[RMDB]
Chemical mapping of a 177-nucleotide RNA with DMS and 2A3.
The RNA was probed in 150 mM KOAc, 10 mM MgCl2 and 150 mM bicine (pH 8.5) at 24 C.
Reactivities are given for positions 27 through 126.
RNA sequence: GGGAACGACUCGAGUAGAGUCGAAAAUCGUACAUUGACAUUGGUUCACGCUCGCUGCUAAAUACUUUUAACGGUGUGCGUCCAAUAAUUUGCCAUCCGCCAGGAGAAUCUGAUGGAUAUAGUCCUGGACCACACACUCAUUCGUGAGUGUGUGGUCAAAAGAAACAACAACAACAAC
Reactivity to DMS in 0.01 (KOAc 150mM, MgCl2 10mM, bicine 150mM(pH8.5), 24C), signal-to-noise 1, nucleotides 027 to 126: u010c230g000u020a150c080a030u000u010g000a170c270a080u000u000g010g010u060u010c290a030c010g010c010u000c010g010c000u000g000c060u000a010a010a160u000a100c300u000u000u000u000a010a020c020g010g040u000g010u000g000c040g020u000c000c030a020a020u010a020a050u000u000u000g000c050c020a070u000c020c030g010c030c000a020g000g000a180g010a080a080u010c010u000g000a060u000g000g000a090u000a060u000a050g010u010c010c040u000g000
Reactivity to 2A3 in 0.01 (KOAc 150mM, MgCl2 10mM, bicine 150mM(pH8.5), 24C), signal-to-noise 2, nucleotides 027 to 126: u110c020g000u110a050c020a050u010u090g080a050c030a040u010u020g050g010u140u240c050a010c010g010c000u010c010g000c000u040g000c010u020a040a030a050u300a300c150u070u070u080u070a020a000c010g000g020u000g000u020g000c000g010u000c010c000a010a000u070a020a070u010u040u050g040c010c000a010u000c000c040g000c010c000a030g020g080a160g110a110a100u060c040u050g040a080u150g080g010a010u090a020u050a110g060u020c000c020u060g040